[RMDB]
RNA sequence: GGGAACGACUCGAGUAGAGUCGAAAAGAGGAUGACUUCGGUCAUCCUCAAAUAAGGAUACCUGCGUGGUGCCGAGAGUAAAUGCAAACACGCCAAACUCAAAAAGUGAAUUCUUCGGAAUUCACAAGCAUAUAGGUUUGUUCGCAAACCUAUAUGCAAAAGAAACAACAACAACAAC
Reactivity to 2A3 in 0.01 (KOAc 150mM, MgCl2 10mM, bicine 150mM(pH8.5), 24C), signal-to-noise 3, nucleotides 027 to 126: g000a000g010g010a000u020g020a000c030u050u080c300g030g000u000c000a000u020c000c000u000c000a010a000a000u010a000a010g080g000a060u070a180c000c020u010g020c030g050u060g000g040u040g050c040c060g070a060g010a000g120u170a100a150a090u150g010c020a030a150a110c010a020c040g000c010c060a100a080a070c050u050c110a090a100a000a040a050g000u000g010a000a000u000u020c010u010u050c260g120g000a010a000u020u010c000a000c000a010a010
Reactivity to DMS in 0.01 (KOAc 150mM, MgCl2 10mM, bicine 150mM(pH8.5), 24C), signal-to-noise 2, nucleotides 027 to 126: g000a040g010g020a020u000g010a010c000u000u010c070g030g040u000c000a000u010c000c000u000c000a030a050a090u010a080a120g020g000a160u010a100c030c030u000g000c050g030u000g000g000u000g000c040c120g020a130g000a150g020u000a050a090a070u000g000c030a020a090a120c040a010c050g020c030c230a040a060a110c090u000c080a060a060a060a130a090g000u000g000a020a010u000u000c000u000u000c250g010g000a010a000u000u000c000a010c000a030a080

The data come from the RNA Mapping Database (RMDB), library M2PK50. This 177-nucleotide RNA was probed chemically with 2A3 and DMS.